[RMDB]
Conditions: 150 mM KOAc, 10 mM MgCl2 and 150 mM bicine (pH 8.5), 24 C. An RNA of 177 nucleotides, treated with 2A3 and DMS and read out base by base.
RNA sequence: GGGAACGACUCGAGUAGAGUCGAAAAGCUUAGCAGUUCGCUGCUAAGCGACGUUGACGGCCCUCACGGUUGACAAAUCCCAAUGAGGACAGGUGACUGACAGAUAUUAAGCGUUCGCGCUUAAUAACAUAAGAGGGUAGUUCGCUACCCUCUUAUGAAAAGAAACAACAACAACAAC
Reactivity to 2A3 in 0.01 (KOAc 150mM, MgCl2 10mM, bicine 150mM(pH8.5), 24C), signal-to-noise 5, nucleotides 027 to 126: g010c000u000u000a000g000c010a020g010u050u140c200g060c140u010g010c000u000a010a000g000c000g000a010c050g030u020u080g060a030c040g070g020c010c020c000u030c010a080c090g060g030u030u050g060a040c020a040a120a070u050c000c000c020a020a080u200g030a040g030g030a020c020a020g000g100u040g040a050c010u030g040a020c030a070g110a050u050a000u090u020a010a000g000c020g020u040u100c220g010c000g010c120u010u000a010a000u010a040a010
Reactivity to DMS in 0.01 (KOAc 150mM, MgCl2 10mM, bicine 150mM(pH8.5), 24C), signal-to-noise 8, nucleotides 027 to 126: g000c000u000u000a000g010c000a010g010u000u010c240g030c010u000g010c000u000a000a000g010c000g010a040c160g000u000u010g000a070c050g010g000c040c010c020u000c040a100c100g000g010u000u000g000a080c120a050a100a110u000c020c010c020a100a090u010g010a050g000g010a120c050a040g010g010u000g010a100c060u000g010a100c180a080g000a180u000a010u000u000a000a000g000c000g010u000u010c210g010c010g010c000u000u000a000a000u000a030a160
In probing experiments dimethyl sulfate is read out at A N1 and C N3, which are open when not base-paired.